[RMDB]
The record gives the reactivity of an RNA of 177 nucleotides to DMS and 2A3. It was measured as part of the RMDB library TTRDES. The reactions ran in a buffer of 150 mM KOAc, 10 mM MgCl2 and 150 mM bicine (pH 8.5), at 24 C. 2A3 adducts were read by reverse transcription with SuperScript II with manganese. Reactivities are rounded to 0.1 and cut off at 0 and 3. Reactivities are given for positions 27 through 126.

RNA sequence: GGGAACGACUCGAGUAGAGUCGAAAAGAUAUGGAUGCAAGGGUGGGAGCUACCGGUCGGAAACGACCGACUAGCGAAGAACACCUUGCAUCCUAAGUCAAAGGGAUGCAAGUUCGCUUGCAUCCCAGACCCGUAAAGAGUUCGCUCUUUACGGGUCAAAAGAAACAACAACAACAAC
Reactivity to DMS in 0.01 (KOAc 150mM, MgCl2 10mM, bicine 150mM(pH8.5), 24C), signal-to-noise 2, nucleotides 027 to 126: g000a030u000a020u020g000g000a010u000g000c000a010a010g000g020g010u000g060g020g010a150g010c000u000a010c100c000g000g010u000c000g010g000a000a010a020c000g000a030c000c000g000a010c300u000a000g020c000g040a170a180g040a110a060c000a050c000c000u010u000g000c010a010u010c000c010u000a000a040g020u000c010a070a110a200g020g010g040a000u000g010c000a040a000g010u000u030c300g020c010u000u000g030c000a000u000c000c000c030a040
Reactivity to 2A3 in 0.01 (KOAc 150mM, MgCl2 10mM, bicine 150mM(pH8.5), 24C), signal-to-noise 2, nucleotides 027 to 126: g020a000u000a010u040g020g000a000u020g000c010a000a020g200g230g200u290g090g090g050a300g010c000u000a000c020c010g020g000u000c000g000g020a000a000a020c010g000a000c000c000g000a000c000u000a010g020c010g080a180a050g140a110a000c000a010c000c000u000u010g000c000a000u000c000c000u000a000a000g000u000c020a010a050a120g010g000g000a000u000g010c000a000a000g040u070u140c230g040c210u010u010g020c000a010u010c000c000c000a020